The data come from the RNA Mapping Database (RMDB), library M2RFPK. The record gives the reactivity of an RNA of 207 nucleotides to 2A3. High 2A3 reactivity points to a flexible backbone, as in loops and unpaired stretches.
RNA sequence: GGGAACGACUCGAGUAGAGUCGAAAAUCAAGCAAAACCCCAAAACCUUACACUGAGAGCAUUUAGCCUGAUUACUCUUUAAAUGAAAUCAGGCAAUAGAGAGAAACUCGAGAGGUGAAAACCCCACAUAACGAUCUAGGCUUCGGCCUAGAUCGAAGGUUUAUAAGUGGUUCGCCACUUAUAAACCAAAAGAAACAACAACAACAAC
Reactivity to 2A3 in 0.01 (KOAc 150mM, MgCl2 10mM, bicine 150mM(pH8.5), 24C), signal-to-noise 2, nucleotides 027 to 156: u110c000a010a010g060c030a040a030a110a230c010c000c000c000a050a080a010a050c110c030u160u170a080c090a050c140u150g050a060g000a010g070c050a030u070u050u070a030g010c000c000u020g010a000u000u080a120c000u020c000u080u260u230a150a210a090u230g030a030a000a000u010c000a010g000g000c000a000a040u010a010g030a000g030a020g010a030a050a030c010u010c030g040a050g000a060g160g010u090g020a060a000a050a020c010c010c020c000a030c030a070u180a170a030c040g010a000u000c000u010a000g030g000c000u020u040c150g070g000c000c000u000a000g000a000u000c000g000a000a000
The reactions ran in a buffer of 150 mM KOAc, 10 mM MgCl2 and 150 mM bicine (pH 8.5), at 24 C.